This 177-nucleotide RNA was probed chemically with DMS and 2A3.
RNA sequence: GGGAACGACUCGAGUAGAGUCGAAAAUCAGCCAUCACUGCAACAGCAACAGAAUCAGCACGGUUACUUCUUCUGUUGCCCCUGAUUCCUCUUCUAGGCGUGAUGGGAGCAACCACUCGGCACCGGCCAGUACGCUCGCAUUCGUGCGAGCGUACUGAAAAGAAACAACAACAACAAC
Reactivity to DMS in 0.01 (KOAc 150mM, MgCl2 10mM, bicine 150mM(pH8.5), 24C), signal-to-noise 2, nucleotides 027 to 126: u010c020a200g010c080c000a020u000c000a060c000u000g020c010a080a070c140a100g070c260a130a000c120a020g000a040a030u000c070a060g030c090a110c190g030g000u000u020a030c000u030u000c060u000u000c040u000g000u000u000g000c000c010c010c030u000g000a000u000u000c020c030u030c130u020u020c070u010a090g010g040c060g000u000g030a050u050g010g010g020a120g000c110a020a120c070c010a130c050u000c080g040g020c040a050c010c020g000g000c090
Reactivity to 2A3 in 0.01 (KOAc 150mM, MgCl2 10mM, bicine 150mM(pH8.5), 24C), signal-to-noise 3, nucleotides 027 to 126: u050c010a020g050c000c000a000u030c020a000c030u170g020c040a100a050c020a170g000c020a010a000c010a030g000a020a010u040c030a030g090c050a020c180g170g010u120u110a100c010u040u070c020u110u030c040u050g030u020u020g000c000c000c010c000u070g010a080u060u050c030c020u090c030u160u070c070u130a060g100g000c000g020u020g000a000u000g000g020g000a020g010c010a010a030c030c030a010c040u060c030g020g010c010a020c040c010g040g010c020

The 2A3 profile rests on 2,492 reads. Conditions: 150 mM KOAc, 10 mM MgCl2 and 150 mM bicine (pH 8.5), 24 C. For 2A3 the reverse transcriptase was SuperScript II with manganese. It was measured as part of the RMDB library OK1LIB.